Source: RMDB library OK3TST, as collected in RNAgym. The record gives the reactivity of an RNA of 207 nucleotides to 2A3 and DMS. The 2A3 profile rests on 4,941 reads. For DMS the reverse transcriptase was MarathonRT. Values cover nucleotides 27 to 156. Conditions: 150 mM KOAc, 10 mM MgCl2 and 150 mM bicine (pH 8.5), 24 C.
RNA sequence: GGGAACGACUCGAGUAGAGUCGAAAACUUGAUUGCUUUACCCGGUACAAGGUCAUCUUUGCCGGCACAACAGUCAUUGGGAGUCGCGAGUGGUAUUUGCUCUGCGAAGGCUUUGGCGAGAAUGCGCACACCAACCUAGGCGCAUUAAUGCGUCAGGCCUAAUGGGAAAGUUCGCUUUCCCAUUAGGAAAAGAAACAACAACAACAAC
Reactivity to 2A3 in 0.01 (KOAc 150mM, MgCl2 10mM, bicine 150mM(pH8.5), 24C), signal-to-noise 5, nucleotides 027 to 156: c020u010u030g020a020u040u050g030c070u060u050u140a080c020c020c030g000g010u100a120c190a080a050g040g160u280c080a160u130c120u000u010u030g010c000c010g000g020c070a020c040a070a010c010a000g030u010c010a040u070u120g100g010g030a130g060u030c010g010c010g030a010g010u050g070g100u200a230u120u170u260g020c010u000c050u120g020c020g030a040a030g020g000c010u140u130u060g020g000c010g010a020g060a050a020u050g030c010g000c010a060c000a040c140c050a090a120c020c040u090a140g050g000c000g010c020a010u040u130a090a080u090g040c010g010u000c010a010g020g000
Reactivity to DMS in 0.01 (KOAc 150mM, MgCl2 10mM, bicine 150mM(pH8.5), 24C), signal-to-noise 2, nucleotides 027 to 156: c040u000u000g010a010u000u000g000c030u000u000u000a260c150c030c010g010g020u010a050c200a000a020g000g020u020c210a140u000c030u000u000u000g000c000c010g010g050c050a120c020a050a010c000a010g010u000c010a050u010u000g000g010g010a140g000u000c030g020c030g000a100g040u000g050g030u000a100u000u000u000g020c000u010c030u010g060c010g010a060a080g010g030c030u010u000u010g010g030c020g000a100g020a040a050u000g000c020g020c030a180c030a060c010c030a030a100c080c010u000a080g060g000c010g000c000a050u000u000a020a060u000g050c020g030u000c010a050g000g040